[RMDB]
RNA sequence: GGGAACGACUCGAGUAGAGUCGAAAAUCGCGUGAGUGUCCAUAUAUCACGAUCCGCAAAGCAGCGGCAGCGGCUGGAGAGGCAGCCGCCCCGAAUAUAUGGCCCCUUGGUGCCCUCGGACAGACUGUUUUAUGGAAGGCAAUUUAUAGUAGUGUUACCUGGUUAAGGAAUUCGUUCCUUAACCAGGAAAAGAAACAACAACAACAAC
Reactivity to 2A3 in 0.01 (KOAc 150mM, MgCl2 10mM, bicine 150mM(pH8.5), 24C), signal-to-noise 1, nucleotides 027 to 156: u050c030g010c020g080u030g020a020g010u030g000u030c030c010a010u060a000u010a020u040c080a020c140g000a070u070c020c000g030c040a070a070a230g050c100a050g000c040g050g030c090a020g000c000g000g000c000u060g000g130a170g010a020g110g040c000a000g000c000c000g000c020c000c000c000g080a100a030u080a000u000a010u040g000g000c000c000c000c000u010u050g040g030u040g010c000c010c010u000c000g020g000a030c010a130g030a040c010u050g120u040u070u050u120a040u090g020g010a050a020g060g000c050a030a010u010u090u020a220u100a020g100u030a000g000u000g040u110u020a000